[RMDB]
RNA sequence: GGGAACGACUCGAGUAGAGUCGAAAACUACACGAAGCCCACCAGCCCGACCUAUUGCUUUGAACUGACCGGAUCCACCCCGUCCGAGCGCAUCACCGAGAUCGAGGACCUGGUGGCGAAUGGGGAGCUACCGUUCGACGCGGCGGAGGCAAUGGUGCCUUAGGUUCUGUUUCGACAGAACCUAAGGAAAAGAAACAACAACAACAAC
Reactivity to DMS in 0.01 (KOAc 150mM, MgCl2 10mM, bicine 150mM(pH8.5), 24C), signal-to-noise 1, nucleotides 027 to 156: c070u000a050c070a140c020g010a130a080g000c040c030c000a130c010c030a090g030c000c030c010g000a090c060c030u000a070u010u020g030c000u000u000u000g010a170a170c030u000g030a110c060c020g000g010a110u000c030c030a110c040c010c010c040g000u000c010c020g020a110g020c070g030c050a090u030c040a090c050c030g000a190g000a080u000c000g010a140g010g050a130c170c020u010g040g000u000g020g020c050g000a080a060u030g010g000g060g020a200g060c010u000a010c020c020g000u010u000c050g060a110c090g050c020g020g000c050g040g000a180g010g010c040a040a080u000g000g000u000g000
Reactivity to 2A3 in 0.01 (KOAc 150mM, MgCl2 10mM, bicine 150mM(pH8.5), 24C), signal-to-noise 2, nucleotides 027 to 156: c010u070a010c050a030c140g140a080a000g160c020c000c000a020c000c010a050g090c010c050c010g050a040c020c010u090a130u090u130g050c050u050u070u170g040a070a070c020u060g050a070c010c000g000g040a030u020c030c010a040c030c020c010c010g000u000c000c010g040a020g080c080g000c030a030u060c020a070c100c060g120a070g000a120u040c010g070a120g020g030a030c050c030u010g000g000u000g020g000c000g020a010a020u070g010g000g000g010a040g040c010u040a040c020c020g030u070u030c000g030a040c070g000c020g050g000c000g040g020a030g000g010c010a010a060u070g010g000u030g020

Chemical mapping of a 207-nucleotide RNA with DMS and 2A3. For DMS, 1,940 sequencing reads were counted. DMS adducts were read by reverse transcription with MarathonRT. Conditions: 150 mM KOAc, 10 mM MgCl2 and 150 mM bicine (pH 8.5), 24 C.